Overview:
This 207-nucleotide RNA was probed chemically with DMS and 2A3. As a SHAPE reagent, 2A3 marks flexible, mostly unpaired nucleotides at the ribose 2'-OH. The 2A3 profile rests on 11,732 reads.

RNA sequence: GGGAACGACUCGAGUAGAGUCGAAAAGGGGUCAUUGAGAGGCUUUGGCUAGCUACGUACUGAAGCCUCCACGGUAUGCAUAGCUUGGACCCAAAGCUCCCCACCUCAAUGACGGAGGCACCCAAAACCAUAAGUUCGGUUCGCCGAACUUAUGGAAGUAUCUGUACUACUUCGGUAGUACAGAUACAAAAGAAACAACAACAACAAC
Reactivity to DMS in 0.01 (KOAc 150mM, MgCl2 10mM, bicine 150mM(pH8.5), 24C), signal-to-noise 2, nucleotides 027 to 156: g000g010g040g020u010c020a040u010u010g000a070g000a290g040g020c030u000u010u020g000g010c020u010a070g000c000u010a070c050g050u000a010c040u000g000a040a080g020c000c000u000c010c030a060c030g040g010u000a020u010g000c040a180u010a050g000c010u010u000g000g010a050c300c000c010a000a020a040g020c020u010c300c040c020c040a300c010c000u000c010a010a050u000g030a070c050g040g010a030g060g000c000a160c020c000c020a090a100a080a230c020c000a030u000a010a020g030u000u000c000g010g000u000u010c300g010c000c000g000a020a000c000u000u000a000u000g000g010a030a070
Reactivity to 2A3 in 0.01 (KOAc 150mM, MgCl2 10mM, bicine 150mM(pH8.5), 24C), signal-to-noise 5, nucleotides 027 to 156: g040g010g020g010u000c000a000u010u010g000a000g000a000g010g000c000u000u000u000g010g000c010u010a010g000c000u000a000c000g010u010a000c010u020g050a140a020g010c000c000u000c000c000a000c010g000g010u020a010u020g040c280a270u020a040g000c000u140u300g020g010a020c000c000c000a000a000a000g020c030u090c060c020c010c000a020c000c000u000c000a000a000u010g000a020c120g000g010a000g000g010c000a030c000c010c000a020a100a040a110c000c000a000u000a000a000g000u000u000c010g040g040u040u090c280g030c100c000g000a000a010c000u000u000a000u000g000g000a010a010